The record gives the reactivity of an RNA of 177 nucleotides to 2A3 and DMS. The DMS profile rests on 6,359 reads. The data come from the RNA Mapping Database (RMDB), library TTRDES.
RNA sequence: GGGAACGACUCGAGUAGAGUCGAAAAGAUAUGGAGCUGUUUAUGGAGGUUACGUGUCGGAAACGACACUAUAACCUAUGAAGUAACGGCAGCUCCUAAGUCAAAGACCUGUGUUCGCACAGGUCAACCAUUAAUCACACUUCGGUGUGAUUAAUGGAAAAGAAACAACAACAACAAC
Reactivity to 2A3 in 0.01 (KOAc 150mM, MgCl2 10mM, bicine 150mM(pH8.5), 24C), signal-to-noise 4, nucleotides 027 to 126: g000a010u020a010u070g000g000a010g010c010u020g070u130u070u050a050u070g100g030a070g070g010u020u020a020c060g000u010g000u000c000g000g010a000a010a020c010g000a010c010a010c000u010a030u040a040a000c010c000u050a300u100g030a000a000g020u020a040a000c050g100g010c030a000g000c000u000c000c000u000a020a000g020u010c040a220a090a040g000a000c000c000u010g000u010g050u040u130c300g040c120a030c030a000g040g000u000c000a000a010
Reactivity to DMS in 0.01 (KOAc 150mM, MgCl2 10mM, bicine 150mM(pH8.5), 24C), signal-to-noise 5, nucleotides 027 to 126: g010a010u000a110u020g000g000a010g030c010u010g010u010u000u000a020u000g010g000a030g020g030u010u000a050c300g030u000g010u010c000g010g000a010a030a070c000g000a010c000a010c000u000a100u010a020a010c000c000u000a300u020g010a090a210g000u010a020a070c260g000g030c050a020g010c010u000c000c000u010a000a100g000u000c010a120a120a110g000a020c000c000u000g020u010g000u000u000c280g030c000a000c000a000g000g010u000c000a030a090